This 177-nucleotide RNA was probed chemically with DMS and 2A3. 2A3 is a SHAPE reagent: it acylates the 2'-hydroxyl of flexible nucleotides of all four kinds. For DMS the reverse transcriptase was MarathonRT.
RNA sequence: GGGAACGACUCGAGUAGAGUCGAAAAAUGCAACGUAUAUUAAUAAGGACCCAGGUUUAUGUGGCCAUUCUAGUGAUAUAUCGAAACAACUGGGAUUUAGUCAGUCACAGAGAUACUAUUACUAUGACGUAUGAACUAAGUUCGCUUAGUUCAUACGAAAAGAAACAACAACAACAAC
Reactivity to DMS in 0.01 (KOAc 150mM, MgCl2 10mM, bicine 150mM(pH8.5), 24C), signal-to-noise 9, nucleotides 027 to 126: a080u000g000c070a060a070c090g000u000a050u000a110u010u010a080a100u000a110a100g010g010a120c020c010c010a110g010g020u000u000u010a040u010g020u000g010g000c030c140a090u010u000c040u010a020g010u000g000a020u000a030u000a060u010c020g010a130a100a100c280a110a280c020u010g000g010g010a050u000u000u000a120g010u010c230a060g000u000c020a040c040a030g010a140g000a020u000a020c190u000a020u000u000a020c020u000a030u010g010a110
Reactivity to 2A3 in 0.01 (KOAc 150mM, MgCl2 10mM, bicine 150mM(pH8.5), 24C), signal-to-noise 5, nucleotides 027 to 126: a010u090g010c030a040a040c050g070u060a100u020a040u240u180a130a140u100a130a070g100g010a090c010c010c000a010g050g030u050u100u050a120u130g060u100g020g000c020c000a030u080u010c020u020a000g010u000g030a020u010a010u010a000u070c040g030a110a090a060c030a010a050c030u020g010g020g020a020u040u040u040a060g050u070c040a000g010u000c000a010c000a040g050a000g000a050u030a030c070u020a040u060u020a030c030u040a040u240g040a050
Annotation:
The 2A3 profile rests on 6,516 reads.